[RMDB]
RNA sequence: GGGAACGACUCGAGUAGAGUCGAAAAAGGAUUAAACAGCAGGCCGUGGUCGCACCCAACCACGUUAAAUAGGGUGCAAAAACACAACUGCCAACGAAUACGCCUACGCUUUGGCAGCCUAAGCGUGCUGCCACGCACCUUUAGACCUUGCCUGUGGGGCUAUAAUGACCUUCGGGUCAUUAUAGCCAAAAGAAACAACAACAACAAC
Reactivity to 2A3 in 0.01 (KOAc 150mM, MgCl2 10mM, bicine 150mM(pH8.5), 24C), signal-to-noise 2, nucleotides 027 to 156: a000g100g010a060u130u200a120a030a040c030a040g000c020a000g010g010c000c000g000u000g000g000u000c000g010c010a000c000c000c000a010a040c000c000a010c020g010u030u040a000a000a010u040a050g000g010g000u000g020c010a010a010a020a020a020c080a020c030a080a090c030u060g040c050c020a060a040c060g060a110a000u080a090c050g040c050c030u130a040c030g000c060u130u140u030g020g000c020a040g010c010c010u110a120a050g050c040g100u100g000c020u050g070c030c020a000c000g030c000a020c000c000u000u120u080a030g010a040c000c000u000u070g000c000c000u020g010u050g030g030
An RNA of 207 nucleotides, treated with 2A3 and read out base by base. The data come from the RNA Mapping Database (RMDB), library RSTRND. For 2A3, 990 sequencing reads were counted. Values cover nucleotides 27 to 156. Conditions: 150 mM KOAc, 10 mM MgCl2 and 150 mM bicine (pH 8.5), 24 C.